Chemical mapping of a 177-nucleotide RNA with 2A3 and DMS. For DMS the reverse transcriptase was MarathonRT. The RNA was probed in 150 mM KOAc, 10 mM MgCl2 and 150 mM bicine (pH 8.5) at 24 C. It was measured as part of the RMDB library TTRINS.
RNA sequence: GGGAACGACUCGAGUAGAGUCGAAAAGAUAUGGACUUUCGGAAGUGAUGACCAAGCGUAUGGUGUUUGUAUAUCGGAAACGAUAUAUGAUACCAUACGCUUGCAAGCUUCUUCGAGUCCUAAGUCAUCUUAAUGUGGAGUUCGCUCCACAUUAAGAAAAAGAAACAACAACAACAAC
Reactivity to 2A3 in 0.01 (KOAc 150mM, MgCl2 10mM, bicine 150mM(pH8.5), 24C), signal-to-noise 2, nucleotides 027 to 126: g010a030u080a090u190g010g020a000c020u010u070u020c070g010g000a000a000g000u070g180a300u180g050a130c020c080a000a010g010c000g000u000a000u010g050g000u040g130u090u120u210g050u020a000u010a000u000c010g040g030a090a070a070c020g000a000u000a000u010a000u040g020a000u000a000c000c000a000u000a000c000g010c000u010u000g000c000a030a020g000c000u010u000c000u010u010c030g000a000g000u010c000c010u000a020a000g000u010c020a060
Reactivity to DMS in 0.01 (KOAc 150mM, MgCl2 10mM, bicine 150mM(pH8.5), 24C), signal-to-noise 4, nucleotides 027 to 126: g000a070u000a300u010g010g000a000c000u000u010u000c240g000g000a030a010g010u000g010a110u010g020a270c300c000a000a000g010c010g010u010a000u000g000g010u000g010u020u000u010g040u010a010u010a000u000c000g020g010a070a110a230c000g010a020u000a000u000a010u000g000a010u000a010c010c010a010u000a000c010g010c010u000u010g000c000a060a150g000c000u000u010c000u000u010c300g000a000g010u000c000c000u010a030a060g010u010c040a160